[RMDB]
RNA sequence: GGGAACGACUCGAGUAGAGUCGAAAAGAUAUGGAGCCAACGUUCAGUAUCGAUGCUCGAUAAGUCGGGUUCGGAAACGAACCGCGACUUUUGACGAGCUAAGAUACUGAACGUUGGCUCCUAAGUCCAAUGGUUAAGACUUCGGUCUUAACCAUUGAAAAGAAACAACAACAACAAC
Reactivity to DMS in 0.01 (KOAc 150mM, MgCl2 10mM, bicine 150mM(pH8.5), 24C), signal-to-noise 4, nucleotides 027 to 126: g010a100u000a300u010g010g020a020g020c000c000a000a010c000g010u010u000c000a000g000u000a010u000c000g000a300u000g000c010u000c010g000a170u000a020a010g010u000c000g010g000g020u000u010c000g000g010a170a100a240c000g010a010a000c000c000g010c010g020a000c000u000u000u000u000g010a250c150g000a010g010c010u000a160a220g000a010u000a010c010u000g000a010a010c000g010u000u000g000g000c010u000c000c000u000a000a050g010u000c040
Chemical mapping of a 177-nucleotide RNA with DMS. For DMS the reverse transcriptase was MarathonRT. For DMS, 5,487 sequencing reads were counted. The RNA was probed in 150 mM KOAc, 10 mM MgCl2 and 150 mM bicine (pH 8.5) at 24 C. Reactivities are given for positions 27 through 126.